[RMDB]
RNA sequence: GGGAACGACUCGAGUAGAGUCGAAAAGAUAUGGACCACGGAGGGAGCUGUGGGUCGGAAACGACCCAACAGCUUUGAUCUCCAGUGGUCCUAAGUCAAAACGGUACUUUCUUCGGAAAGUACCGAACAUAGUCAGUACCUUCGGGUACUGACUAUGAAAAGAAACAACAACAACAAC
Reactivity to DMS in 0.01 (KOAc 150mM, MgCl2 10mM, bicine 150mM(pH8.5), 24C), signal-to-noise 3, nucleotides 027 to 126: g010a010u000a050u020g000g010a010c000c000a020c010g000g000a020g000g000g010a010g030c000u000g020u000g000g010g010u000c010g020g000a010a020a040c000g010a020c010c000c000a010a020c000a000g010c000u000u000u010g000a050u010c010u000c000c010a130g030u000g000g000u010c000c000u000a010a070g000u000c010a130a080a130a280c020g000g010u000a010c000u000u000u000c000u000u010c270g010g010a000a000a010g010u000a000c000c000g000a010a080
Reactivity to 2A3 in 0.01 (KOAc 150mM, MgCl2 10mM, bicine 150mM(pH8.5), 24C), signal-to-noise 1, nucleotides 027 to 126: g000a000u010a000u050g000g000a010c000c010a010c020g000g010a010g000g020g020a040g000c010u010g010u020g030g010g000u000c000g020g000a010a020a010c000g010a010c000c010c020a000a000c000a000g030c000u030u030u020g000a000u000c000u000c000c060a010g000u000g010g000u000c000c000u000a000a000g000u000c000a010a020a080a170c010g000g000u000a000c010u050u020u000c010u050u090c300g130g000a010a000a010g000u010a010c000c010g000a010a000